[RMDB]
RNA sequence: GGGAACGACUCGAGUAGAGUCGAAAAGAUAUGGAUUUGCUACCCACCUUUCGAAUUACCUGCCGAUGAAAUCUCUCGGAAACGAGAGAUGGAGGCACGUAAUUCGAAAGAGGCAAAUCCUAAGUCACAUACCAUACGAGUUCGCUCGUAUGGUAUGAAAAGAAACAACAACAACAAC
Reactivity to DMS in 0.01 (KOAc 150mM, MgCl2 10mM, bicine 150mM(pH8.5), 24C), signal-to-noise 4, nucleotides 027 to 126: g010a140u010a160u000g000g010a000u000u000u000g000c000u000a150c030c010c030a300c130c010u000u000u000c000g000a030a010u000u000a010c000c120u000g010c000c000g000a120u010g000a100a110a000u000c000u000c000u010c020g010g000a090a080a200c000g000a020g020a000g000a010u000g000g000a050g010g020c000a010c300g010u000a000a010u000u000c000g010a000a010a000g010a060g000g000c000a010a010a010u000c000c000u000a040a080g000u020c190a230
Reactivity to 2A3 in 0.01 (KOAc 150mM, MgCl2 10mM, bicine 150mM(pH8.5), 24C), signal-to-noise 4, nucleotides 027 to 126: g200a050u300a250u300g000g000a010u010u070u010g020c030u200a300c030c000c010a020c010c030u000u000u000c010g000a000a000u010u000a010c040c070u050g000c020c020g300a300u060g010a040a020a010u020c000u000c000u010c020g030g070a160a080a060c010g000a000g000a010g010a010u000g000g010a000g000g000c010a000c010g000u020a000a000u000u000c000g000a000a020a000g000a000g000g000c000a000a010a000u000c010c000u020a080a040g300u170c040a020